[RMDB]
This 207-nucleotide RNA was probed chemically with 2A3. High 2A3 reactivity points to a flexible backbone, as in loops and unpaired stretches. The reactions ran in a buffer of 150 mM KOAc, 10 mM MgCl2 and 150 mM bicine (pH 8.5), at 24 C. The 2A3 profile rests on 2,066 reads. For 2A3 the reverse transcriptase was SuperScript II with manganese.
RNA sequence: GGGAACGACUCGAGUAGAGUCGAAAACUUGCUUCGAAACACCAUCGAUCGUCCCUUCUUCUUUUACCUUCUUCUGGCUCUUCCGAUGAGACGCGACCGGUGGCACCCCUGCUCGGUUCGUCCCAACCUGCUUUUUGUCUAUCUGAGCCUCUGCCGCGUUGGAAUCAAAGUUCGCUUUGAUUCCAACAAAAGAAACAACAACAACAAC
Reactivity to 2A3 in 0.01 (KOAc 150mM, MgCl2 10mM, bicine 150mM(pH8.5), 24C), signal-to-noise 2, nucleotides 027 to 156: c090u120u290g040c010u070u040c010g050a100a040a000c040a030c000c030a030u000c020g020a010u020c000g030u060c040c040c010u030u090c030u050u040c020u000u180u070u120a110c030c010u060u070c020u090u040c020u080g060g040c040u040c000u140u030c060c030g080a100u060g040a040g020a050c040g010c030g020a030c030c000g000g000u050g030g000c040a100c030c030c010c010u010g000c020u020c020g000g000u030u030c030g000u000c020c000c000a000a070c010c020u070g010c010u090u110u010u100u140g080u040c020u040a120u000c060u060g020a010g020c000c010u040c040u070g050c030c020g060c030